[RMDB]
RNA sequence: GGGAACGACUCGAGUAGAGUCGAAAAAUUAGAUCUAGUACAUACUGCACUAUUGUAAUGAUCUCAUAGCCACCUCCUGUUGCUAUUGCAGUGAACUCAAGUGUUGCAGGUAUCCACUUAAAACGCCAAAUGAUGCUCAUCAUCUCCACAGAUGCAAGAUAUAGGUGCUAUUCGUAGCACCUAUAUCAAAAGAAACAACAACAACAAC
Reactivity to 2A3 in 0.01 (KOAc 150mM, MgCl2 10mM, bicine 150mM(pH8.5), 24C), signal-to-noise 4, nucleotides 027 to 156: a010u090u060a030g030a050u040c040u090a040g060u070a060c020a080u080a070c040u030g030c020a010c050u070a070u160u070g040u090a060a090u070g050a030u010c010u000c030a020u020a040g020c010c030a020c010c020u170c010c050u070g000u040u040g020c020u020a020u050u210g000c040a010g030u010g070a050a030c000u000c060a030a040g020u030g050u170u070g000c010a010g000g060u020a040u050c020c010a030c030u030u100a030a070a070a050c070g030c050c030a030a050a040u120g040a040u080g030c060u000c030a090u020c000a030u010c030u030c080c040a060c020a070g040a040u040g040c020a040a070
Reactivity to DMS in 0.01 (KOAc 150mM, MgCl2 10mM, bicine 150mM(pH8.5), 24C), signal-to-noise 4, nucleotides 027 to 156: a110u010u000a050g010a070u000c040u000a130g050u020a060c020a100u010a140c090u010g020c030a040c050u010a140u000u010g010u000a070a150u000g010a050u000c000u000c070a070u010a090g010c060c040a130c040c060u010c040c020u000g000u000u000g020c040u000a080u010u000g040c040a070g070u000g010a050a070c040u000c030a060a110g020u000g000u000u010g010c060a050g010g010u000a060u010c040c050a080c060u000u000a030a060a050a080c050g020c030c030a040a080a100u020g010a080u010g010c030u000c030a070u010c010a040u000c020u000c020c070a070c090a060g000a100u000g010c070a080a160
Notes: An RNA of 207 nucleotides, treated with 2A3 and DMS and read out base by base. Conditions: 150 mM KOAc, 10 mM MgCl2 and 150 mM bicine (pH 8.5), 24 C. For DMS the reverse transcriptase was MarathonRT. It was measured as part of the RMDB library OK3TST.